An RNA of 170 nucleotides, treated with 2A3 and DMS and read out base by base. 2A3 is a SHAPE reagent: it acylates the 2'-hydroxyl of flexible nucleotides of all four kinds. For DMS the reverse transcriptase was MarathonRT. The DMS profile rests on 6,873 reads. Values cover nucleotides 27 to 129. The reactions ran in a buffer of 150 mM KOAc, 10 mM MgCl2 and 150 mM bicine (pH 8.5), at 24 C. The 2A3 profile rests on 2,371 reads. The data come from the RNA Mapping Database (RMDB), library 15KLIB.
RNA sequence: GGGAACGACUCGAGUAGAGUCGAAAAACCGUGAGUGGAACCCUCGAUCCUUUAUUGGGGGGUACACUCGAGGAGUGGAAGGCGGGUAGGGGGGACCCCAGGGUCAACCUACGGAAAUCCCUGAGUUGAAGGAUGGUCUUCGGACCAUCCAAAAGAAACAACAACAACAAC
Reactivity to 2A3 in 0.01 (KOAc 150mM, MgCl2 10mM, bicine 150mM(pH8.5), 24C), signal-to-noise 2, nucleotides 027 to 129: a000c030c000g080u010g020a010g000u000g000g040a130a020c010c010c000u000c000g040a050u110c000c150u200u300u280a070u140u120g000g000g000g000g000g000u080a030c010a000c000u000c010g000a030g050g010a030g000u140g040g040a020a030g030g020c030g000g010g000u070a030g030g000g000g070g000g000a040c010c000c000c010a000g040g000g030u000c000a040a060c000c000u080a090c050g000g010a050a020a000u000c000c000c000u030g030a060g010u060u010g100a100a000
Reactivity to DMS in 0.01 (KOAc 150mM, MgCl2 10mM, bicine 150mM(pH8.5), 24C), signal-to-noise 3, nucleotides 027 to 129: a040c100c040g030u000g030a070g020u040g020g020a240a160c000c000c000u000c000g000a000u020c260c120u110u010u030a040u020u010g000g020g000g000g000g000u000a200c090a010c020u030c020g000a040g020g030a070g020u010g040g000a050a020g020g020c150g000g000g000u010a080g000g000g030g020g090g010a050c020c030c010c050a000g010g030g080u000c150a050a080c010c040u000a110c220g020g010a050a070a130u000c030c000c000u020g020a140g020u020u050g000a070a080